[RMDB]
RNA sequence: GGGAACGACUCGAGUAGAGUCGAAAACGGGGCUAGCGAGUGGAUGUUCCGCCUCCCCAGGGUCCCGAGUGAGGCUUAUCCCGGGGAACUCGGCCCAGUCCCGAGAUGGCCGCGUCCGAGGUUCCCACUAAGUAAUCAAGUUCGCUUGAUUACUUAGAAAAGAAACAACAACAACAAC
Reactivity to 2A3 in 0.01 (KOAc 150mM, MgCl2 10mM, bicine 150mM(pH8.5), 24C), signal-to-noise 4, nucleotides 027 to 126: c010g030g020g000g020c010u020a030g030c010g030a020g020u210g050g040a060u090g120u190u040c020c030g020c020c030u020c000c000c000c010a020g020g000g010u020c010c010c030g000a070g080u200g040a130g020g010c050u080u100a050u100c000c010c000g000g000g000g010a030a020c010u010c060g090g030c000c030c010a020g080u040c000c010c010g020a050g000a030u060g010g000c010c030g080c030g050u030c050c010g020a040g090g000u000u010c000c000c000a010
Reactivity to DMS in 0.01 (KOAc 150mM, MgCl2 10mM, bicine 150mM(pH8.5), 24C), signal-to-noise 4, nucleotides 027 to 126: c060g010g000g010g010c030u000a050g000c030g010a180g000u020g020g000a100u010g000u000u000c040c030g010c260c070u010c010c000c000c010a070g000g010g010u000c190c010c020g010a110g010u010g000a090g010g010c300u010u010a070u010c000c010c010g010g000g010g000a060a040c060u000c030g000g000c090c090c040a120g010u000c010c000c010g000a140g000a100u000g030g020c000c020g000c170g010u000c040c030g010a100g010g000u000u000c000c010c000a290
Source: RMDB library 15KREP, as collected in RNAgym. An RNA of 177 nucleotides, treated with 2A3 and DMS and read out base by base. For DMS, 4,961 sequencing reads were counted. For 2A3 the reverse transcriptase was SuperScript II with manganese.